Notes
The record gives the reactivity of an RNA of 207 nucleotides to 2A3. The 2A3 profile rests on 945 reads. It was measured as part of the RMDB library OK3TST. For 2A3 the reverse transcriptase was SuperScript II with manganese. The RNA was probed in 150 mM KOAc, 10 mM MgCl2 and 150 mM bicine (pH 8.5) at 24 C.

RNA sequence: GGGAACGACUCGAGUAGAGUCGAAAAGAGCUGCUUGAGAGAGUAGCAAAUGAUGAAGGAGAGGGCUCAUCAAAAUGAAGCUAUGACAAAAAAACCGUCUUGGUCUUUAUAGGUGCCCUAAUGGGAAAGAAGCUAAGGAACAGCCUUGGGCAGGCAAGGCGUGAUCAGUAUUCGUACUGAUCACGCCAAAAGAAACAACAACAACAAC
Reactivity to 2A3 in 0.01 (KOAc 150mM, MgCl2 10mM, bicine 150mM(pH8.5), 24C), signal-to-noise 2, nucleotides 027 to 156: g040a030g000c000u040g030c000u010u030g000a030g000a000g000a040g050u050a000g010c000a020a000a030u110g010a010u020g030a100a010g010g010a060g010a020g020g010g000c040u030c020a080u010c010a080a060a000a160u100g020a030a000g020c040u010a040u140g020a060c050a000a260a000a030a060a030a050c020c070g000u010c020u030u050g020g010u040c010u030u040u020a070u090a140g070g000u060g000c000c000c010u060a080a090u100g000g000g030a010a090a000g040a060a000g030c040u070a020a020g020g030a110a030c010a020g040c060c000u000u020g010g020g030c010a000g070g000c020a050a100